[RMDB]
RNA sequence: GGGAACGACUCGAGUAGAGUCGAAAACUAAGGGUUUUUGUCUCUUGACCAUCCUCAGAGCCUAUUUGAACCCUCAACACUUUCCUGAACCAGGGGUGAAAAGUGGUUCUUGUCUGCAUAAAGUAUCGGUAAAAGUCAGAUUCGUCUGACUUUUACCAAAAGAAACAACAACAACAAC
Reactivity to 2A3 in 0.01 (KOAc 150mM, MgCl2 10mM, bicine 150mM(pH8.5), 24C), signal-to-noise 2, nucleotides 027 to 126: c040u070a060a080g090g020g020u040u020u030u130u160g040u060c010u000c000u000u060g020a030c010c020a080u020c010c020u030c000a010g020a010g030c000c070u110a120u070u100u070g020a010a020c000c020c000u010c020a080a110c000a000c040u070u190u110c010c000u040g030a080a070c110c030a050g020g040g000g010u050g000a150a000a030a000g080u120g000g000u010u000c000u030u060g040u000c020u060g040c010a030u150a190a050a070g170u250a140u300c090
Reactivity to DMS in 0.01 (KOAc 150mM, MgCl2 10mM, bicine 150mM(pH8.5), 24C), signal-to-noise 3, nucleotides 027 to 126: c060u010a090a120g000g010g010u000u000u000u020u010g020u000c000u000c010u010u000g000a110c110c110a160u000c080c030u000c050a020g030a110g000c070c030u010a110u000u000u010g010a040a070c010c000c030u000c100a090a170c100a040c000u010u010u020c030c010u000g020a110a120c170c120a060g030g000g010g000u000g000a040a080a090a060g010u010g020g000u000u000c030u000u000g010u000c040u000g010c130a090u010a080a070a130g000u000a040u010c130
Conditions: 150 mM KOAc, 10 mM MgCl2 and 150 mM bicine (pH 8.5), 24 C.
Chemical mapping of a 177-nucleotide RNA with 2A3 and DMS.
2A3 adducts were read by reverse transcription with SuperScript II with manganese.
DMS adducts were read by reverse transcription with MarathonRT.
It was measured as part of the RMDB library OK2TST.